About this RNA:
An RNA of 177 nucleotides, treated with 2A3 and DMS and read out base by base. Reactivities are given for positions 27 through 126. For DMS the reverse transcriptase was MarathonRT. For 2A3, 33,362 sequencing reads were counted.
RNA sequence: GGGAACGACUCGAGUAGAGUCGAAAAGUUCACACGCACGUCUUCCCCCACGAGGUCAUGCGGUUUUUCGGGGGGCUGGUGUCGUGGGUCACCCAGGACGAGCUAGCGAGCGUCACCGCCGUGUGCGAACGACUCAUAUAUUCGUAUAUGAGUCGUUAAAAGAAACAACAACAACAAC
Reactivity to 2A3 in 0.01 (KOAc 150mM, MgCl2 10mM, bicine 150mM(pH8.5), 24C), signal-to-noise 9, nucleotides 027 to 126: g040u140u130c030a010c000a010c060g050c010a020c020g070u020c030u050u030c000c000c000c000c000a300c070g020a030g020g070u090c050a100u280g120c170g060g070u060u040u030u100u100c020g000g000g000g000g010g000c020u040g000g040u060g020u060c030g040u040g000g000g040u090c040a100c030c010c000a020g040g050a030c050g020a020g040c020u060a030g030c020g080a030g030c030g120u250c070a040c070c010g020c010c020g070u090g030u070g050c030g010
Reactivity to DMS in 0.01 (KOAc 150mM, MgCl2 10mM, bicine 150mM(pH8.5), 24C), signal-to-noise 9, nucleotides 027 to 126: g010u020u010c020a080c040a050c020g020c090a020c020g010u010c040u010u000c010c010c000c010c010a100c070g010a040g010g000u010c070a110u030g020c140g000g010u010u010u010u020u010c070g010g000g000g000g000g010c100u000g000g000u010g010u010c020g020u000g000g000g000u010c090a110c020c000c010a130g000g000a060c050g010a090g010c050u000a130g010c040g000a120g010c030g000u010c090a080c080c030g000c030c020g020u020g010u010g010c060g010